Source: RMDB library OK2TST, as collected in RNAgym. This 177-nucleotide RNA was probed chemically with 2A3 and DMS. The DMS profile rests on 2,751 reads. Values cover nucleotides 27 to 126. For 2A3 the reverse transcriptase was SuperScript II with manganese. The RNA was probed in 150 mM KOAc, 10 mM MgCl2 and 150 mM bicine (pH 8.5) at 24 C. The 2A3 profile rests on 2,515 reads.
[RMDB]
RNA sequence: GGGAACGACUCGAGUAGAGUCGAAAAGAUGGGCCUGGUGUGGCUUGCCAAUCAGGAGUUUAGAGCUCUCUGGGGAUUUACUGCCUUCCAAGCCUGCAGGCCUCCUGUGGCUCAGCAUCAAGGUGCCCUCUUCCAUACACUUCGGUGUAUGGAAGAGAAAAGAAACAACAACAACAAC
Reactivity to 2A3 in 0.01 (KOAc 150mM, MgCl2 10mM, bicine 150mM(pH8.5), 24C), signal-to-noise 2, nucleotides 027 to 126: g060a060u100g000g020g030c010c000u050g020g130u160g050u020g070g000c070u020u010g030c010c020a050a160u140c010a020g030g020a030g030u090u120u140a210g040a040g080c010u020c010u000c030u060g000g020g080g000a010u070u100u230a220c090u140g060c000c000u100u030c040c010a040a000g020c010c000u010g010c000a000g040g000c000c010u040c000c000u090g030u080g030g000c000u010c040a040g000c000a090u070c050a070a070g090g030u090g040c040c010
Reactivity to DMS in 0.01 (KOAc 150mM, MgCl2 10mM, bicine 150mM(pH8.5), 24C), signal-to-noise 3, nucleotides 027 to 126: g010a100u010g010g010g040c000c020u010g030g040u000g030u010g020g010c050u000u010g030c080c070a050a120u010c020a040g010g010a020g010u010u010u010a150g030a230g000c020u000c020u010c060u020g010g010g010g000a120u000u010u010a070c190u010g000c030c010u000u020c120c070a030a050g010c030c050u010g000c030a030g010g000c050c010u000c040c010u000g010u000g010g000c000u010c040a110g010c050a050u000c050a070a110g010g010u010g020c040c050